[RMDB]
An RNA of 177 nucleotides, treated with DMS and 2A3 and read out base by base. 2A3 adducts were read by reverse transcription with SuperScript II with manganese. Reactivities are rounded to 0.1 and cut off at 0 and 3.
RNA sequence: GGGAACGACUCGAGUAGAGUCGAAAAGAUAUGGACCGUGAAAGCCCUCGAUAAGGAGGUUUCGGAAACGAAACGCUCCUUUUGACGAGGAGGGUCGGUCCUAAGUCAAAAGUACGCUUCGGCGUACCACUCUGGCAAUGUUCGCAUUGCCAGAGUGAAAAGAAACAACAACAACAAC
Reactivity to DMS in 0.01 (KOAc 150mM, MgCl2 10mM, bicine 150mM(pH8.5), 24C), signal-to-noise 4, nucleotides 027 to 126: g020a050u000a300u010g000g020a010c000c010g020u000g020a170a130a240g030c120c000c000u000c010g020a170u010a020a010g010g010a000g000g010u000u000u010c000g010g000a070a070a140c010g010a010a000a000c010g000c000u000c000c000u000u010u010u000g010a210c230g010a100g010g000a040g000g000g000u010c010g020g000u000c000c000u000a020a080g000u020c010a090a070a110a160g020u000a010c010g000c010u000u020c210g020g010c000g020u000a010c000
Reactivity to 2A3 in 0.01 (KOAc 150mM, MgCl2 10mM, bicine 150mM(pH8.5), 24C), signal-to-noise 2, nucleotides 027 to 126: g030a000u040a020u080g000g000a000c000c030g060u120g300a210a130a060g190c000c010c010u000c020g150a140u070a300a010g000g010a000g000g020u010u010u000c000g000g020a040a030a020c010g020a000a020a000c070g130c090u070c000c000u010u000u000u050g020a010c050g030a050g170g080a020g010g000g020u130c000g000g000u000c000c000u030a080a010g030u000c030a200a030a060a000g020u010a000c000g000c000u010u170c300g220g000c000g010u010a000c010